RNA sequence: GGGAACGACUCGAGUAGAGUCGAAAAGCUGCCGGGCGUGUACGACGACGAUGGCCGGCACCCACGCUGACGUUCGUCGGGUGAUUCCCGAUGGCCUGUCGAUCGGCGUAGACGAGAUGCGUGCCAAAUAGGUCAUCAGUUUCGACUGAUGACCUAUAAAAGAAACAACAACAACAAC
Reactivity to DMS in 0.01 (KOAc 150mM, MgCl2 10mM, bicine 150mM(pH8.5), 24C), signal-to-noise 2, nucleotides 027 to 126: g020c140u020g020c020c020g020g000g020c000g040u010g000u000a040c030g010a020c040g000a060c020g010a090u000g010g000c020c010g000g020c000a030c040c030c030a040c030g000c080u000g020a250c120g000u010u000c000g030u000c050g030g000g000u000g010a180u000u020c020c020c010g000a100u010g010g000c030c010u000g030u000c040g010a140u000c050g000g010c010g000u000a050g000a040c030g010a110g000a100u010g010c030g020u010g020c060c070a070a160
Reactivity to 2A3 in 0.01 (KOAc 150mM, MgCl2 10mM, bicine 150mM(pH8.5), 24C), signal-to-noise 2, nucleotides 027 to 126: g050c020u010g050c040c000g050g040g050c020g000u040g130u030a040c020g000a000c000g000a010c020g020a110u040g060g050c000c020g000g020c030a000c000c000c000a000c000g000c040u160g090a030c090g080u120u050c050g000u090c080g020g000g000u080g070a190u160u150c040c020c000g010a140u070g000g020c030c000u110g040u060c020g140a300u080c020g000g000c020g020u070a050g000a060c050g010a010g000a150u130g090c010g040u090g030c020c020a100a110